[RMDB]
RNA sequence: GGGAACGACUCGAGUAGAGUCGAAAACGGAGGUGGUGCUGACGUGCCGGGCGGGGGGCCUCCCCGAGCCCACACUGUACUGGGAGAAGGACGGGAUGGCCCUGGACGAAGUGUGGGACAGCAGCCAUAUCUGACCGAUAUUCGUAUCGGUCAGAUAAAAAGAAACAACAACAACAAC
Reactivity to 2A3 in 0.01 (KOAc 150mM, MgCl2 10mM, bicine 150mM(pH8.5), 24C), signal-to-noise 2, nucleotides 027 to 126: c000g070g030a070g060g050u130g000g070u070g060c010u040g050a060c070g030u040g060c010c030g000g060g000c080g010g020g010g000g030g020c000c010u060c000c000c000c000g000a030g030c000c010c000a020c000a000c010u200g130u290a100c030u040g000g030g010a100g030a140a160g090g020a020c050g000g000g020a020u150g040g000c000c030c030u000g000g020a010c070g020a100a040g040u040g010u040g050g010g030a010c020a010g030c010a010g050c000c010a030
Reactivity to DMS in 0.01 (KOAc 150mM, MgCl2 10mM, bicine 150mM(pH8.5), 24C), signal-to-noise 3, nucleotides 027 to 126: c150g010g000a140g020g020u000g000g000u000g000c040u010g020a130c090g030u000g000c040c070g000g000g010c090g020g000g000g000g040g010c050c050u000c040c000c020c010g010a190g000c000c000c000a030c090a090c090u010g010u010a090c120u000g020g010g010a150g010a160a120g010g020a230c300g000g000g000a100u010g010g010c030c010c010u010g010g020a090c100g010a100a060g010u000g030u000g000g000g010a110c070a100g020c090a070g000c020c040a130